[RMDB]
RNA sequence: GGGAACGACUCGAGUAGAGUCGAAAAUCAAUGGCAGUGCUGGUAGUCAUGAUCUUGGGAGGAUUUUCAAUGAGUGACCUGGCCAAGCUUGUGAUCCUGAUGGGUGCUACUUUCGCAGAAAUGAACAGAGUUUCCUAUGAUUCGUCAUAGGAAACUCAAAAGAAACAACAACAACAAC
Reactivity to DMS in 0.01 (KOAc 150mM, MgCl2 10mM, bicine 150mM(pH8.5), 24C), signal-to-noise 3, nucleotides 027 to 126: u050c150a090a070u020g010g010c050a050g000u050g000c050u040g000g010u040a100g000u000c000a020u010g000a100u010c100u000u000g000g030g010a070g010g000a090u020u010u020u010c030a070a100u050g010a090g010u000g000a060c010c020u000g030g000c030c050a110a050g010c030u000u000g020u030g000a060u000c020c010u010g000a120u000g000g000g040u000g000c030u000a060c060u010u000u010c050g000c050a050g020a080a090a060u010g010a110a080c220a090
Reactivity to 2A3 in 0.01 (KOAc 150mM, MgCl2 10mM, bicine 150mM(pH8.5), 24C), signal-to-noise 4, nucleotides 027 to 126: u150c050a040a100u090g050g020c060a020g030u080g110c060u090g040g030u060a090g030u010c000a030u030g020a040u000c010u040u020g050g010g010a090g060g010a040u060u020u090u150c130a140a110u250g030a030g170u040g030a060c000c000u000g060g060c000c000a000a000g000c040u020u030g010u020g010a020u040c000c000u030g000a070u080g040g110g000u000g070c020u010a020c000u090u110u100c110g000c030a040g140a110a170a100u180g080a100a040c080a110
An RNA of 177 nucleotides, treated with DMS and 2A3 and read out base by base. For DMS the reverse transcriptase was MarathonRT. Values cover nucleotides 27 to 126. 2A3 adducts were read by reverse transcription with SuperScript II with manganese. Conditions: 150 mM KOAc, 10 mM MgCl2 and 150 mM bicine (pH 8.5), 24 C. The 2A3 profile rests on 1,439 reads. The DMS profile rests on 4,227 reads.